[RMDB]
RNA sequence: GGGAACGACUCGAGUAGAGUCGAAAAAGCCGCUCAACUGGAGGCGAUCCGGCGACAGAUCAGCCGUUGCUACCGAAGGGGUUGGCCCAUUAUUUGCGGGCUGCCGAACGGACUGAGCGGCAGGCUAGAUUAGUGGUCCAUUCGUGGACCACUAAUCAAAAGAAACAACAACAACAAC
Reactivity to DMS in 0.01 (KOAc 150mM, MgCl2 10mM, bicine 150mM(pH8.5), 24C), signal-to-noise 4, nucleotides 027 to 126: a100g000c000c000g030c010u000c010a070a120c120u000g010g010a290g010g000c020g010a030u000c050c030g030g010c210g010a280c040a070g000a020u000c050a140g030c030c000g020u000u020g000c120u010a150c010c010g010a090a060g010g010g010g020u000u000g050g010c000c000c010a120u000u010a140u010u010u010g030c190g010g010g000c010u000g000c010c010g000a130a180c020g010g000a150c130u000g000a020g010c000g010g020c010a010g000g000c090u000a110
Reactivity to 2A3 in 0.01 (KOAc 150mM, MgCl2 10mM, bicine 150mM(pH8.5), 24C), signal-to-noise 3, nucleotides 027 to 126: a030g000c000c000g000c000u010c030a040a170c040u090g080g050a020g050g000c010g010a010u030c040c010g030g010c030g040a060c060a080g110a120u110c040a030g010c000c010g070u080u100g020c030u050a130c020c020g150a140a010g200g070g000g010u150u280g040g000c010c000c000a080u210u180a160u090u210u140g120c120g000g000g000c010u000g010c010c000g020a090a050c000g010g010a040c020u020g000a000g000c000g010g000c000a000g030g050c020u070a030
An RNA of 177 nucleotides, treated with DMS and 2A3 and read out base by base. As a SHAPE reagent, 2A3 marks flexible, mostly unpaired nucleotides at the ribose 2'-OH. Values are in units of 0.01, from 0 to 300, in steps of 10. DMS adducts were read by reverse transcription with MarathonRT. 2A3 adducts were read by reverse transcription with SuperScript II with manganese.